An RNA of 207 nucleotides, treated with 2A3 and read out base by base. Values cover nucleotides 27 to 156. The RNA was probed in 150 mM KOAc, 10 mM MgCl2 and 150 mM bicine (pH 8.5) at 24 C. Reactivities are rounded to 0.1 and cut off at 0 and 3.

[RMDB]
RNA sequence: GGGAACGACUCGAGUAGAGUCGAAAAGCGGCAUCGCCUCCCUCUCUGAUGAGGGCGUCGCAGAGUUCACAAGCCUCGCGGCCCUGACCGCAAAGGCGACAAAGUCCACGGCGGGCGAGAUGACCUCGCUGUUUGCCACAGGCUACGGCAUUUAUAAUCUUUCUGAGACAUUCGUGUCUCAGAAAGAAAAAGAAACAACAACAACAAC
Reactivity to 2A3 in 0.01 (KOAc 150mM, MgCl2 10mM, bicine 150mM(pH8.5), 24C), signal-to-noise 1, nucleotides 027 to 156: g000c010g100g000c040a060u170c040g050c100c040u070c000c040c000u000c000u030c080u120g200a190u150g000a030g000g030g000c000g000u010c000g000c080a030g010a010g080u200u260c170a130c010a120a020g020c000c000u040c100g000c010g000g000c000c100c080u170g070a160c000c000g000c000a030a020a020g000g000c000g000a000c020a000a210a020g000u010c000c000a080c040g000g000c000g010g000g000c010g000a010g000a100u300g060a180c020c010u000c000g030c000u010g230u070u130u300g000c000c010a030c040a080g060g000c000u050a040c040g000g010c000a010u000u300u050a280u020a070a160